An RNA of 177 nucleotides, treated with 2A3 and DMS and read out base by base.

RNA sequence: GGGAACGACUCGAGUAGAGUCGAAAAGAUAUGGAGUAGCGACGACGGCAAGUUAUCCUCUCGGAAACGAGAGAAUAAUGAUGACCCAUCAGCUACUCCUAAGUCAAAAGCGGUCUUCGGACCGCAAGUUAUUUAUGAAGUUCGCUUCAUAAAUAACAAAAGAAACAACAACAACAAC
Reactivity to 2A3 in 0.01 (KOAc 150mM, MgCl2 10mM, bicine 150mM(pH8.5), 24C), signal-to-noise 5, nucleotides 027 to 126: g010a010u030a040u080g010g000a000g000u010a000g000c020g080a090c120g010a030c080g070g010c050a130a070g010u000u000a000u010c000c000u010c000u000c010g020g000a030a040a020c010g000a000g000a000g000a010a010u020a010a000u040g190a100u200g080a130c020c010c000a060u100c050a040g000c010u000a000c000u000c000c000u000a000a000g000u000c010a010a020a050a140g010c000g020g000u000c010u060u120c300g120g000a010c010c000g000c010a010a000
Reactivity to DMS in 0.01 (KOAc 150mM, MgCl2 10mM, bicine 150mM(pH8.5), 24C), signal-to-noise 7, nucleotides 027 to 126: g000a030u000a300u010g000g000a030g030u000a000g010c000g010a090c250g010a120c300g000g010c020a100a180g000u000u000a000u000c010c000u000c000u000c000g000g000a080a050a150c000g010a010g000a000g000a020a000u000a000a000u000g010a110u000g000a300c260c010c030a080u010c040a130g010c000u000a010c000u000c000c000u000a010a060g010u010c010a080a060a100a090g010c000g000g000u000c000u000u000c200g020g000a010c000c000g010c010a010a020
For DMS, 7,353 sequencing reads were counted.
The RNA was probed in 150 mM KOAc, 10 mM MgCl2 and 150 mM bicine (pH 8.5) at 24 C.
Reactivities are given for positions 27 through 126.
DMS adducts were read by reverse transcription with MarathonRT.
The 2A3 profile rests on 19,307 reads.
Source: RMDB library TTRDEL, as collected in RNAgym.